[RMDB]
An RNA of 177 nucleotides, treated with 2A3 and DMS and read out base by base. In probing experiments dimethyl sulfate is read out at A N1 and C N3, which are open when not base-paired. For DMS the reverse transcriptase was MarathonRT. Values cover nucleotides 27 to 126. 2A3 adducts were read by reverse transcription with SuperScript II with manganese.
RNA sequence: GGGAACGACUCGAGUAGAGUCGAAAAGCGUGUCAUCUGACUUCCACGUCUCGCUCUGCCUUCGCUCUGCGCUGUCUGCGUUCUGCAGCUUGGGUUUGGCUAGGGCAGAGGAUUCUGGGAAAUGAUCACCAUAAGAGCCAUUCGUGGCUCUUAUGGUAAAAGAAACAACAACAACAAC
Reactivity to 2A3 in 0.01 (KOAc 150mM, MgCl2 10mM, bicine 150mM(pH8.5), 24C), signal-to-noise 9, nucleotides 027 to 126: g090c090g020u060g040u060c040a090u030c080u100g080a070c050u030u000c010c010a070c090g010u000c000u000c010g300c030u000c000u000g000c000c000u010u010c010g000c000u040c010u040g000c250g040c080u020g080u140c010u020g010c010g090u300u180c110u300g000c000a000g000c010u050u080g070g010g000u030u070u060g010g000c010u020a010g000g000g000c000a000g000a000g000g000a010u010u000c030u050g030g000g030a010a030a050u120g040a100u160c020
Reactivity to DMS in 0.01 (KOAc 150mM, MgCl2 10mM, bicine 150mM(pH8.5), 24C), signal-to-noise 3, nucleotides 027 to 126: g000c120g020u010g010u020c080a090u000c040u010g000a130c150u000u000c010c000a040c130g010u000c010u000c020g030c010u000c010u000g000c010c010u010u000c160g000c010u010c080u010g000c030g010c020u000g000u000c010u000g000c010g020u030u020c190u050g000c000a000g010c030u000u000g010g010g010u000u020u020g000g020c000u010a040g000g000g010c000a010g010a010g000g010a010u000u000c010u010g000g000g000a020a090a090u010g010a090u010c120